[RMDB]
RNA sequence: GGGAACGACUCGAGUAGAGUCGAAAAAGCGUGUGUGUCAGCCCAGCACUUGCUGCGUGGGAGGUGAAUUCCGGACGGACGCGUAUGGUCAGGUGUAGCAUUAUUAGUUCUUUGAGUCGGUACAUUUCAGGGCGCAUGUUCCAGAGGGUAGCAAGGGGUACAUAGUUAGUUUCGACUGAUUGUGUACAAAAGAAACAACAACAACAAC
Reactivity to DMS in 0.01 (KOAc 150mM, MgCl2 10mM, bicine 150mM(pH8.5), 24C), signal-to-noise 4, nucleotides 027 to 156: a090g000c040g040u010g020u000g010u010g010u000c030a150g020c010c000c020a200g020c020a050c050u000u000g020c050u000g010c050g010u020g020g020g010a160g040g000u000g010a010a140u000u000c030c010g000g000a080c050g000g010a070c040g020c060g010u010a080u000g020g010u000c030a090g030g020u000g040u010a090g000c040a080u010u000a110u010u000a090g010u000u000c040u010u000u000g000a090g000u000c040g020g010u000a080c080a130u000u020u010c080a130g000g020g030c040g000c060a080u000g020u000u000c040c040a110g010a120g020g010g020u000a060g030c060a050a040g000g010g010
Reactivity to 2A3 in 0.01 (KOAc 150mM, MgCl2 10mM, bicine 150mM(pH8.5), 24C), signal-to-noise 4, nucleotides 027 to 156: a000g050c040g000u030g000u010g000u010g010u010c030a020g010c000c000c000a000g000c010a010c020u070u140g030c040u030g000c010g090u060g020g000g010a060g000g020u060g060a030a030u090u020c020c010g010g020a010c010g000g020a000c020g020c000g030u040a050u050g020g000u020c020a020g000g010u020g020u050a020g010c020a000u000u030a030u060u040a070g040u090u050c040u040u060u110g030a040g030u030c030g020g010u060a040c020a110u040u040u110c050a040g000g030g000c040g000c040a030u060g020u050u040c010c010a020g010a010g030g010g010u020a020g030c020a060a030g010g000g020
An RNA of 207 nucleotides, treated with DMS and 2A3 and read out base by base. The data come from the RNA Mapping Database (RMDB), library OK3TST. For DMS the reverse transcriptase was MarathonRT. The RNA was probed in 150 mM KOAc, 10 mM MgCl2 and 150 mM bicine (pH 8.5) at 24 C.